[RMDB]
RNA sequence: GGGAACGACUCGAGUAGAGUCGAAAACGCGCUAGAGAUGUACAUGGGUUUGCCCCCUUAUCUGUGUACUAUCUCGUUUCAUACGCCUGUGAUAGGUUGAGUGGGGGCGGUCUGGGCUUGGCGCGAAGUGUAUUAAUAUAUUCGUAUAUUAAUACACAAAAGAAACAACAACAACAAC
Reactivity to 2A3 in 0.01 (KOAc 150mM, MgCl2 10mM, bicine 150mM(pH8.5), 24C), signal-to-noise 4, nucleotides 027 to 126: c010g000c010g010c010u060a030g010a010g020a160u060g070u160a080c040a210u130g020g030g050u070u070u300g050c010c000c010c000c010u090u240a210u110c000u030g100u000g000u090a030c010u050a040u000c010u010c000g010u030u140u130c200a210u220a100c060g050c030c060u170g000u020g100a040u040a080g080g040u110u170g030a010g020u030g000g000g010g010g000c000g000g000u040c010u020g010g010g010c000u010u020g010g000c010g000c020g040a080a030